Chemical mapping of a 177-nucleotide RNA with DMS and 2A3.
RNA sequence: GGGAACGACUCGAGUAGAGUCGAAAAUCAGAUCAGAACCGUCGUCGCGUUUCGGGCUACAGCCUGUUGCUGGACUCUGUGAGACACCUGACCGACCGCUGAGCGACUGACUGGUCCACAGCGCCGGUUGUUUGACAAUAUUCGUAUUGUCAAACAAAAAAGAAACAACAACAACAAC
Reactivity to DMS in 0.01 (KOAc 150mM, MgCl2 10mM, bicine 150mM(pH8.5), 24C), signal-to-noise 9, nucleotides 027 to 126: u020c070a080g010a080u020c050a050g000a070a110c080c070g000u000c030g010u010c050g020c050g000u010u020u010c050g010g000g000c040u030a100c140a110g000c030c060u010g010u010u010g000c040u010g010g010a090c050u000c020u010g010u000g010a170g010a080c100a080c060c030u000g000a080c010c000g000a040c300c030g020c020u010g000a120g010c100g010a030c010u010g010a130c160u040g000g000u000c010c030a260c040a020g000c020g030c060c010g000g000
Reactivity to 2A3 in 0.01 (KOAc 150mM, MgCl2 10mM, bicine 150mM(pH8.5), 24C), signal-to-noise 9, nucleotides 027 to 126: u070c010a020g040a070u040c010a010g030a080a060c030c030g030u040c020g030u020c020g010c020g040u040u090u090c030g010g010g000c020u090a070c050a040g020c010c020u100g050u090u110g040c030u060g010g020a040c020u000c020u070g070u050g050a040g010a030c030a040c030c020u030g040a040c000c010g020a020c000c020g000c020u040g020a040g060c100g040a030c000u030g070a090c050u130g020g000u000c000c010a050c000a010g010c010g010c010c010g030g000